[RMDB]
RNA sequence: GGGAACGACUCGAGUAGAGUCGAAAACAGCAUGGUACCAGGCAGCCCAACCCUGACCUAAAGUAAAUUCCCGGAAGAAGUCUUUCCUGGGUUUUGAAUUUGCAGUAACAGGUGUGAGCAUUCUAGCCUAAAUGUGGUCUUUCGAGACCACAUUUAGAAAAGAAACAACAACAACAAC
Reactivity to DMS in 0.01 (KOAc 150mM, MgCl2 10mM, bicine 150mM(pH8.5), 24C), signal-to-noise 4, nucleotides 027 to 126: c110a090g010c070a060u020g000g000u020a070c090c050a030g000g010c050a090g010c000c020c040a100a070c070c010c020u010g000a080c050c020u000a080a060a100g010u020a030a050a070u000u000c000c000c010g010g000a030a020g010a220a130g000u040c070u030u010u000c000c010u010g020g000g010u000u000u000u010g010a090a130u000u020u010g010c070a100g000u010a070a080c100a040g000g010u000g020u000g020a120g010c040a100u010u010c010u010a040g010c300
Reactivity to 2A3 in 0.01 (KOAc 150mM, MgCl2 10mM, bicine 150mM(pH8.5), 24C), signal-to-noise 3, nucleotides 027 to 126: c020a000g130c020a040u060g020g000u040a040c040c030a010g000g070c010a020g040c020c020c000a000a040c010c000c000u020g080a080c000c040u070a110a100a020g000u030a000a050a050u030u030c000c000c000g030g010a020a010g050a110a030g090u070c070u040u080u040c010c020u120g010g010g010u040u000u010u010g010a010a010u060u040u130g020c050a020g020u110a110a000c030a050g000g010u040g010u020g050a040g010c020a030u090u030c010u070a050g010c010